About this RNA
An RNA of 207 nucleotides, treated with DMS and 2A3 and read out base by base. The RNA was probed in 150 mM KOAc, 10 mM MgCl2 and 150 mM bicine (pH 8.5) at 24 C. For DMS the reverse transcriptase was MarathonRT. For 2A3, 2,527 sequencing reads were counted. It was measured as part of the RMDB library M2RFPK.
[RMDB]
RNA sequence: GGGAACGACUCGAGUAGAGUCGAAAAGUUAGGCGAGGCUCCUAUACAAACACAGGUUGCUGAUCUGACGACGUCGAGAGACGCCCAAGAUUAGGACAGGAUAUAUCGAACCUAGGUAUAUCCCCAUAAAACUCGGAACACUUCGGUGUUCCGAGAACUACUCAAGAAUGUUCGCAUUCUUGAGUAGAAAAGAAACAACAACAACAAC
Reactivity to DMS in 0.01 (KOAc 150mM, MgCl2 10mM, bicine 150mM(pH8.5), 24C), signal-to-noise 2, nucleotides 027 to 156: g010u000u000a020g040g000c010g010a120g010g010c030u000c060c010u000a150u000a150c130a100a130a120c030a040c080a060g010g040u000u000g000c030u000g010a050u000c030u000g010a140c010g010a020c010g000u010c010g020a300g000a300g020a000c000g000c000c010c100a220a050g010a010u010u000a080g030g010a190c070a010g000g010a020u000a020u000a010u000c000g020a060a230c040c040u000a120g010g030u000a020u000a010u000c000c010c040c030a050u010a030a040a100a160c000u010c000g000g010a050a040c000a010c010u000u000c290g030g000u000g030u000u000c000c010g000a000g030a000a100
Reactivity to 2A3 in 0.01 (KOAc 150mM, MgCl2 10mM, bicine 150mM(pH8.5), 24C), signal-to-noise 3, nucleotides 027 to 156: g030u030u020a030g010g040c120g060a070g080g000c100u060c020c010u110a100u090a200c120a030a220a010c100a010c030a090g110g000u150u160g080c000u010g020a050u000c010u030g010a010c010g000a010c000g000u020c020g010a030g010a000g000a100c010g030c010c000c000a020a010g040a060u090u180a030g040g030a020c080a080g020g000a010u010a010u010a000u040c020g030a050a100c050c080u040a070g000g020u010a000u000a000u010c000c000c010c000a050u200a110a180a030a050c010u000c000g000g000a000a000c010a000c010u050u140c270g060g000u000g000u000u000c000c000g000a000g000a000a000